[RMDB]
RNA sequence: GGGAACGACUCGAGUAGAGUCGAAAAACACAAUUUUCAUUGUUGUUGAUCAAGGUGGACCUACAUUAGCUUUUGUGGCUAAAAUAUGUGGGUCCUGUUUGGCGAUAGUCAUUUCGAGGACCGAGAGAGAAGGGAAGAAUUUCGAUUCUUCCCUUCUAAAAGAAACAACAACAACAAC
Reactivity to DMS in 0.01 (KOAc 150mM, MgCl2 10mM, bicine 150mM(pH8.5), 24C), signal-to-noise 2, nucleotides 027 to 126: a080c130a110c220a120a020u030u020u020u040c150a170u010u000g000u000u000g000u010u000g010a080u000c100a050a210g000g010u000g020g020a000c000c000u010a010c010a040u000u010a010g010c000u000u040u010u020g010u010g010g000c010u000a030a070a060a150u010a060u000g000u000g000g000g020u000c000c020u020g000u000u020u000g020g020c050g000a070u000a040g010u030c140a070u010u000u010c060g000a090g000g030a030c020c010g000a210g010a100g010
Conditions: 150 mM KOAc, 10 mM MgCl2 and 150 mM bicine (pH 8.5), 24 C. This 177-nucleotide RNA was probed chemically with DMS. DMS adducts were read by reverse transcription with MarathonRT. It was measured as part of the RMDB libraries RFM100 and RFMREP.